[RMDB]
RNA sequence: GGGAACGACUCGAGUAGAGUCGAAAAGAUAGUACUCAUGCGCUAGGUGUGUCGGAUCUGUCAUGACGAUCAGUACGAUCACAUGACUAGGACAUGCUAGCAUGUCGAUCUGUACGUACGAUCCUAGCAGAGUGUGUUUGUUCGCAAACACACUCUGAAAAGAAACAACAACAACAAC
Reactivity to 2A3 in 0.01 (KOAc 150mM, MgCl2 10mM, bicine 150mM(pH8.5), 24C), signal-to-noise 2, nucleotides 027 to 126: g090a040u230a040g040u010a050c160u000c060a050u140g020c020g060c110u040a020g060g030u030g030u040g020u110c000g010g050a090u030c050u050g000u050c040a050u050g100a150c100g010a010u010c020a020g130u210a070c140g010a000u020c000a010c020a010u020g030a070c020u070a040g100g000a020c000a010u050g000c020u040a010g030c000a010u040g020u020c100g000a060u060c020u090g020u080a040c030g010u000a040c020g040a040u020c010c000u040a010g060
Reactivity to DMS in 0.01 (KOAc 150mM, MgCl2 10mM, bicine 150mM(pH8.5), 24C), signal-to-noise 2, nucleotides 027 to 126: g020a120u000a090g000u000a090c000u000c070a070u000g030c160g010c040u000a010g000g020u000g030u010g010u000c030g000g000a060u010c100u000g020u000c030a030u000g000a090c200g020a020u000c000a210g030u000a160c200g010a010u000c000a100c000a000u000g000a060c000u000a090g030g020a040c100a040u000g020c030u020a030g020c000a000u000g000u000c080g000a040u000c030u010g000u000a010c020g000u010a070c140g010a110u000c030c020u000a030g020